Overview: The record gives the reactivity of an RNA of 177 nucleotides to DMS. For DMS the reverse transcriptase was MarathonRT. The reactions ran in a buffer of 150 mM KOAc, 10 mM MgCl2 and 150 mM bicine (pH 8.5), at 24 C. Values cover nucleotides 27 to 126. It was measured as part of the RMDB library M2PK90. In probing experiments dimethyl sulfate is read out at A N1 and C N3, which are open when not base-paired. The DMS profile rests on 762 reads.

RNA sequence: GGGAACGACUCGAGUAGAGUCGAAAAUAUAGUAUGGAGGAGGCUGGAAGUUAGAAGGAGAAUGGAAGGAAGGAGAAGAACUCCAGGUAUUGGCACUGGAGCCUGGAAAAAAUCCAAGAGCCGUAAAUGAUAGCUGAUAGUUCGCUAUCAGCUAUCAAAAAGAAACAACAACAACAAC
Reactivity to DMS in 0.01 (KOAc 150mM, MgCl2 10mM, bicine 150mM(pH8.5), 24C), signal-to-noise 1, nucleotides 027 to 126: u000a050u010a110g000u000a090u000g000g020a100g000g010a080g000g050c100u010g000g010a030a050g030u000u010a060g030a040a120g000g010a040g020a100a120u000g000g020a060a070g020g010a070a080g040g000a070g000a070a110g000a110a100c050u000c000c010a010g000g000u000a080u010u040g030g010c000a060c070u000g010g000a030g040c050c000u000g020g060a000a010a040a050a050a080u000c030c030a030a130g000a070g000c050c060g020u010a050a070a150